[RMDB]
RNA sequence: GGGAACGACUCGAGUAGAGUCGAAAAAAAAAAGAAAAGGCCAGGCGCACUGGCUCACGCCUGUAAUCCCAGCAUUUCGGGAGGCUGAGGCGGGUGGAUCACCUGAGGUCAGGAGUUCAAGACCAGCACAUGCAGGUUCUUUCGAGAACCUGCAUGUAAAAGAAACAACAACAACAAC
Reactivity to DMS in 0.01 (KOAc 150mM, MgCl2 10mM, bicine 150mM(pH8.5), 24C), signal-to-noise 1, nucleotides 027 to 126: a000a000a020a020a020a010g000a050a040a170a090g050g010c080c000a010g000g000c120g000c120a110c070u000g000g040c010u000c030a020c070g000c030c010u000g000u080a150a030u040c000c010c040a090g000c130a170u020u040u040c150g020g010g030a100g010g010c060u060g000a040g010g000c000g000g000g020u000g040g000a060u070c100a060c040c060u030g000a230g000g000u030c040a020g000g020a130g020u040u000c040a080a120g000a080c040c000a080g000c200
The data come from the RNA Mapping Database (RMDB), library OK1LIB. An RNA of 177 nucleotides, treated with DMS and read out base by base. Values are in units of 0.01, from 0 to 300, in steps of 10. Values cover nucleotides 27 to 126. The DMS profile rests on 1,203 reads.